[RMDB]
RNA sequence: GGGAACGACUCGAGUAGAGUCGAAAAACAGCCGCAACCUAAAGUAAUCGCAAACGACGAUAACUACUCUCUAGCGGCUUAGGCCAGCUAGCGCUCCUUCUAUGUAUUCUUGUGGACUAGAUUUUGGAGUGUCACCCUAACACCUGAUCGCGAUGGACAACCAAAGUUUCUUCGGAAACUUUGGUUGAAAAGAAACAACAACAACAAC
Reactivity to 2A3 in 0.01 (KOAc 150mM, MgCl2 10mM, bicine 150mM(pH8.5), 24C), signal-to-noise 2, nucleotides 027 to 156: a000c030a030g050c000c010g000c030a050a050c000c020u140a120a120a000g030u040a000a050u030c030g040c120a210a220a230c130g140a050c000g010a030u080a110a090c040u090a040c010u050c000u000c030u060a010g000c010g000g000c010u010u030a020g000g030c030c040a020g030c040u140a040g010c010g000c040u000c000c000u010u000c010u030a050u150g030u030a110u110u070c130u170u210g140u170g060g010a020c010u000a020g020a190u110u170u030u230g000g000a000g000u050g020u000c030a030c000c000c010u010a060a040c000a040c010c000u010g040a090u100c070g050c010g100a060u040g000g060a020
Annotation:
An RNA of 207 nucleotides, treated with 2A3 and read out base by base. For 2A3, 795 sequencing reads were counted. For 2A3 the reverse transcriptase was SuperScript II with manganese. It was measured as part of the RMDB library RSTRND. Reactivities are given for positions 27 through 156.